[RMDB]
RNA sequence: GGGAACGACUCGAGUAGAGUCGAAAACAUGGUGGCGGCAAGGUCUUGAUGUCUGCACCACAGCAGAAGUGGCACGGUGAUAACCCUGCCGUAGCACAGUAUGCCCGUUUUGCUGGUCAGGACAUGGCAGCGAUAACCGACGAUGCUGGCGCAUUCGUGUUGUGAGACUAUUCGUAGUCUCACAACAAAAAGAAACAACAACAACAAC
Reactivity to DMS in 0.01 (KOAc 150mM, MgCl2 10mM, bicine 150mM(pH8.5), 24C), signal-to-noise 2, nucleotides 027 to 156: c070a080u140g020g030u000g050g030c030g000g050c000a110a020g000g010u010c050u000u000g010a100u020g010u000c010u010g020c020a120c030c040a050c290a130g050c030a110g000a120a260g020u000g010g070c010a040c070g030g020u000g000a160u010a050a110c030c020c020u000g000c010c010g060u000a010g200c000a020c010a130g000u000a240u000g000c070c010c030g030u010u000u000u000g040c040u000g020g000u000c090a080g000g020a020c030a120u000g000g030c030a080g000c070g000a130u000a090a160c020c010g000a130c050g010a090u010g000c020u000g000g050c030g010c050a160u010u000c030g010
Reactivity to 2A3 in 0.01 (KOAc 150mM, MgCl2 10mM, bicine 150mM(pH8.5), 24C), signal-to-noise 4, nucleotides 027 to 156: c070a040u150g050g000u020g050g000c020g000g020c030a050a030g030g020u040c060u100u070g080a090u100g050u020c040u070g000c060a060c050c020a050c000a010g060c030a020g010a260a020g070u090g050g030c040a000c080g030g040u060g050a140u060a160a040c020c000c040u050g000c000c000g020u030a020g130c030a020c000a030g070u060a030u140g020c030c010c020g040u040u050u060u050g030c020u040g000g060u030c020a020g060g020a070c040a090u060g020g000c010a020g000c030g040a050u060a100a060c060c060g030a030c020g020a040u030g000c020u070g120g000c030g000c060a030u140u150c070g020